[RMDB]
RNA sequence: GGGAACGACUCGAGUAGAGUCGAAAAAGGGCCUUCCUUCGUCGGUGGUCCUCCCUCUCCUUGUCGGUGAAGUCUCCCCUGGAACGCCUCUUCCUAGGUCCGGAGUCUAUCUCCAUCUGGUCUGUCCGGGCCCUCUUCGCCGGGGGAGCCCCCUCUCGCUAAUGAUAGGGUUCGCCCUAUCAUUAGCAAAAGAAACAACAACAACAAC
Reactivity to 2A3 in 0.01 (KOAc 150mM, MgCl2 10mM, bicine 150mM(pH8.5), 24C), signal-to-noise 1, nucleotides 027 to 156: a000g050g000g020c030c010u180u170c230c010u130u110c080g260u090c040g050g040u010g010g010u020c000c000u050c000c000c000u000c000u000c010c000u080u130g100u220c090g000g080u060g070a120a090g060u050c030u030c030c000c010c040u000g020g000a030a090c030g100c060c020u050c060u140u050c000c040u050a040g000g010u010c020c030g030g000a030g070u000c100u050a060u020c050u020c020c040a120u010c130u200g040g020u050c040u120g120u060c020c010g010g000g010c000c040c000u070c030u100u110c040g000c030c000g000g020g000g040g020a010g000c000c000c000c000c000u010c030u060c080